[RMDB]
RNA sequence: GGGAACGACUCGAGUAGAGUCGAAAAGCUCUGCAAAUGGGGUAGGAGGCGAUGCCUCGUCCUCAUACCCAACUCCUAUUCCGGCACGUCCACGUCGUGCAGAGCGGUAACAUGCGUUACUAGGGGAGUUAGAAUGAAUCUUCGGAUUCAUUCUAACAAAAGAAACAACAACAACAAC
Reactivity to DMS in 0.01 (KOAc 150mM, MgCl2 10mM, bicine 150mM(pH8.5), 24C), signal-to-noise 6, nucleotides 027 to 126: g020c000u000c000u010g000c000a030a130a090u030g020g000g000g000u010a020g000g020a010g010g010c100g010a110u040g010c110c090u000c020g000u020c000c000u000c030a040u020a060c020c020c010a130a120c030u010c000c010u000a130u010u010c030c010g000g020c070a110c120g000u020c070c070a100c100g000u020c080g030u020g000c000a000g000a010g010c000g000g010u000a010a010c020a180u050g020c180g000u000u000a010c010u000a070g010g000g000g010a160
Reactivity to 2A3 in 0.01 (KOAc 150mM, MgCl2 10mM, bicine 150mM(pH8.5), 24C), signal-to-noise 9, nucleotides 027 to 126: g000c000u000c000u010g010c020a050a080a230u220g030g010g000g020u060a040g040g050a010g010g020c070g090a060u230g130c040c070u040c010g090u160c010c000u010c010a010u040a040c000c000c010a020a040c020u020c000c000u030a070u120u070c030c010g040g020c070a040c110g070u060c090c010a100c090g060u080c020g010u040g000c000a000g000a000g000c000g000g000u010a010a010c020a050u300g090c190g080u000u010a020c030u040a040g020g010g000g000a090

Notes:
Structure probing data (DMS and 2A3) for a 177-nucleotide construct. Reactivities are given for positions 27 through 126. The RNA was probed in 150 mM KOAc, 10 mM MgCl2 and 150 mM bicine (pH 8.5) at 24 C. 2A3 adducts were read by reverse transcription with SuperScript II with manganese. DMS adducts were read by reverse transcription with MarathonRT. For DMS, 17,500 sequencing reads were counted.